[RMDB]
RNA sequence: GGGAACGACUCGAGUAGAGUCGAAAAGGAUAUUUCGGCCAUCAAGUCGGCGAUGGAGAAGCUGGGCCAGGAGUCGCAGGCUCUGGGGCAAGCGAUCUACGAAGCAGCUCAGGCUGCGUCACAGGCCGCAUGGUUAAACUUUCGAGUUUAACCAUGCAAAAGAAACAACAACAACAAC
Reactivity to DMS in 0.01 (KOAc 150mM, MgCl2 10mM, bicine 150mM(pH8.5), 24C), signal-to-noise 4, nucleotides 027 to 126: g020g000a100u020a100u000u010u000c000g000g000c000c020a080u010c060a060a070g000u000c030g010g010c030g010a090u010g000g000a110g010a110a090g010c040u020g010g000g000c020c010a300g010g020a060g000u000c040g030c120a110g000g000c000u000c000u010g000g000g030g000c020a150a060g030c010g000a130u010c050u010a090c130g000a080a130g000c010a110g020c000u000c110a090g010g010c000u000g000c000g000u010c000a100c120a080g000g030c060c040
Reactivity to 2A3 in 0.01 (KOAc 150mM, MgCl2 10mM, bicine 150mM(pH8.5), 24C), signal-to-noise 6, nucleotides 027 to 126: g130g010a100u060a110u180u070u060c020g010g010c000c010a030u040c040a020a040g040u020c030g050g030c060g060a110u110g050g000a060g020a090a040g020c030u060g010g130g020c000c010a010g030g020a050g020u040c060g020c300a080g070g000c000u000c000u080g130g000g000g080c040a050a010g000c010g030a060u020c010u020a050c080g030a090a010g000c010a000g000c020u030c040a050g160g000c010u010g000c010g040u030c020a070c040a050g010g050c020c010
Overview
This 177-nucleotide RNA was probed chemically with DMS and 2A3. The reactions ran in a buffer of 150 mM KOAc, 10 mM MgCl2 and 150 mM bicine (pH 8.5), at 24 C. Values cover nucleotides 27 to 126. For DMS, 7,071 sequencing reads were counted.